RNA sequence: GGGAACGACUCGAGUAGAGUCGAAAAAAUCAGGUGGCGAUGGAGCGACGGGGCAUAAAAGGCCUCUCUGGGAACGACUUGAGUGCAAACUCAUGGUAGGACCUGAGAGGAGCCGAUGUUCCGUCGUCUUGAUGUCAUUGUUCGCAAUGACAUCAAGAAAAGAAACAACAACAACAAC
Reactivity to DMS in 0.01 (KOAc 150mM, MgCl2 10mM, bicine 150mM(pH8.5), 24C), signal-to-noise 2, nucleotides 027 to 126: a120a020u000c080a080g000g000u000g010g020c040g020a070u000g000g020a110g010c000g010a020c020g010g000g000g000c010a010u000a030a040a140a130g000g010c010c000u000c000u000c000u000g020g000g000a060a300c020g000a040c090u000u000g000a010g000u000g000c300a060a120a030c000u000c000a000u000g010g000u000a070g000g000a300c000c000u000g000a000g000a020g010g000a040g000c010c020g000a050u000g010u000u000c000c000g000u000c000g000u010
Reactivity to 2A3 in 0.01 (KOAc 150mM, MgCl2 10mM, bicine 150mM(pH8.5), 24C), signal-to-noise 1, nucleotides 027 to 126: a000a000u140c070a040g020g030u030g040g010c030g040a060u060g040g040a040g000c010g000a000c000g010g000g000g000c000a020u060a030a150a040a000g020g010c000c010u010c000u000c010u040g000g020g020a170a060c000g020a010c010u020u030g000a000g000u050g040c030a050a150a000c000u010c020a010u040g000g060u070a030g030g000a070c010c010u010g020a000g000a010g020g010a010g010c000c000g010a000u010g010u010u000c000c000g000u000c000g000u010
Structure probing data (DMS and 2A3) for a 177-nucleotide construct. Values are in units of 0.01, from 0 to 300, in steps of 10. The RNA was probed in 150 mM KOAc, 10 mM MgCl2 and 150 mM bicine (pH 8.5) at 24 C. The 2A3 profile rests on 3,650 reads. It was measured as part of the RMDB library RFMREP.